[RMDB]
Structure probing data (2A3 and DMS) for a 177-nucleotide construct. 2A3 adducts were read by reverse transcription with SuperScript II with manganese. Reactivities are given for positions 27 through 126.
RNA sequence: GGGAACGACUCGAGUAGAGUCGAAAAUGGCCGAGUAGCUAAGUGCGGACGGGAUAAGCGCUGAAAGCAUCUAAGCGCCAAGCCCUUCCCAAGAUGAGUUUUCCCUACAGGUUCGUGGAAGACCACCGGAUGUGUCUCUAUUCGUAGAGACACAUCCAAAAGAAACAACAACAACAAC
Reactivity to 2A3 in 0.01 (KOAc 150mM, MgCl2 10mM, bicine 150mM(pH8.5), 24C), signal-to-noise 5, nucleotides 027 to 126: u110g040g000c030c040g020a040g070u080a020g050c040u050a110a020g080u050g080c060g010g000a020c030g040g010g040a030u050a090a030g020c060g040c070u030g040a080a060a000g060c020a020u060c050u060a060a000g000c000g000c030c010a050a110g010c010c000c000u020u010c020c000c010a010a030g070a130u140g030a020g050u020u010u010u030c020c010c000u050a070c060a120g100g040u040u120c050g070u140g020g040a080a010g030a070c010c010a010c010c050
Reactivity to DMS in 0.01 (KOAc 150mM, MgCl2 10mM, bicine 150mM(pH8.5), 24C), signal-to-noise 3, nucleotides 027 to 126: u000g020g030c010c070g020a200g000u020a070g050c040u010a120a090g000u040g020c080g010g000a300c040g000g020g000a050u000a190a200g010c090g000c020u000g000a070a170a150g020c140a040u010c030u020a160a040g000c000g000c000c020a090a160g020c010c000c050u010u000c020c000c010a130a090g000a050u020g000a080g000u020u000u000u000c000c000c000u000a080c230a120g020g000u000u010c140g010u000g000g000a030a060g010a030c020c010a050c170c160